RNA sequence: GGGAACGACUCGAGUAGAGUCGAAAAUUGCCGUAUUUUGCCGAAAGCUCAUCGGAGCGGCCCGCCAUUUCUGUAAGGAUCGCCUGCAAAUCCUUCAGGUCGAGCAGGAGAAGCCCUUCUUCAUCAACAUUAAAUCGCAUUUCGAUGCGAUUUAAUGAAAAGAAACAACAACAACAAC
Reactivity to DMS in 0.01 (KOAc 150mM, MgCl2 10mM, bicine 150mM(pH8.5), 24C), signal-to-noise 5, nucleotides 027 to 126: u000u000g020c020c020g010u000a120u000u010u000u010g020c020c030g000a060a120a130g020c090u010c100a100u000c050g020g020a130g010c020g010g010c020c080c060g010c070c060a120u000u010u020c080u000g020u010a060a050g000g010a060u000c040g000c030c030u000g020c060a060a130a090u000c020c040u010u000c160a070g010g030u000c070g020a300g010c030a040g000g000a030g000a040a100g000c110c020c030u000u010c040u000u000c090a120u010c130a060a120
Reactivity to 2A3 in 0.01 (KOAc 150mM, MgCl2 10mM, bicine 150mM(pH8.5), 24C), signal-to-noise 4, nucleotides 027 to 126: u120u070g020c010c000g010u050a160u060u160u120u150g080c000c000g040a140a110a020g070c040u030c070a110u060c020g000g020a030g020c010g000g000c030c010c000g010c020c010a100u090u150u000c070u080g080u120a030a020g030g020a040u010c030g020c080c020u020g000c020a000a080a100u020c000c000u080u150c050a040g010g000u030c040g030a020g010c020a020g010g010a050g010a010a030g020c000c000c000u030u040c020u050u020c020a190u060c010a060a090

Record summary
Chemical mapping of a 177-nucleotide RNA with DMS and 2A3. The data come from the RNA Mapping Database (RMDB), library OK2TST. DMS adducts were read by reverse transcription with MarathonRT.